[RMDB]
RNA sequence: GGGAACGACUCGAGUAGAGUCGAAAACUUAAAUUUUUUACUCAAUGAUGAUUCAUGUGUCUCUGAGAAACUAAGAUAAUAUGAUUUAAUUCUGUGCUUUUGGGAUAGUCUAACUUAAUUCAUGAAGGAGUACAGGGGAUGGGCGCUUUGUGUGUCACGCUAAAUCGGUAUUCGUACCGAUUUAGCGAAAAGAAACAACAACAACAAC
Reactivity to 2A3 in 0.01 (KOAc 150mM, MgCl2 10mM, bicine 150mM(pH8.5), 24C), signal-to-noise 1, nucleotides 027 to 156: c070u040u000a040a270a230u120u090u070u020u100u290a220c100u070c080a060a030u150g060a040u030g000a000u130u030c110a000u080g000u010g030u000c000u020c010u120g000a010g040a010a110a000c060u030a140a000g080a100u170a300a020u130a070u070g000a040u020u050u130a170a040u030u000c060u070g000u000g000c000u000u140u070u140g050g020g000a000u010a020g070u000c020u040a030a030c000u010u110a080a020u280u000c000a030u130g060a000a000g040g070a010g000u010a010c000a010g000g000g000g000a010u000g000g000g030c000g010c030u020u100u080g000u010g000u000g010u010c000a000
Source information: The record gives the reactivity of an RNA of 207 nucleotides to 2A3. 2A3 adducts were read by reverse transcription with SuperScript II with manganese. Reactivities are given for positions 27 through 156. The RNA was probed in 150 mM KOAc, 10 mM MgCl2 and 150 mM bicine (pH 8.5) at 24 C.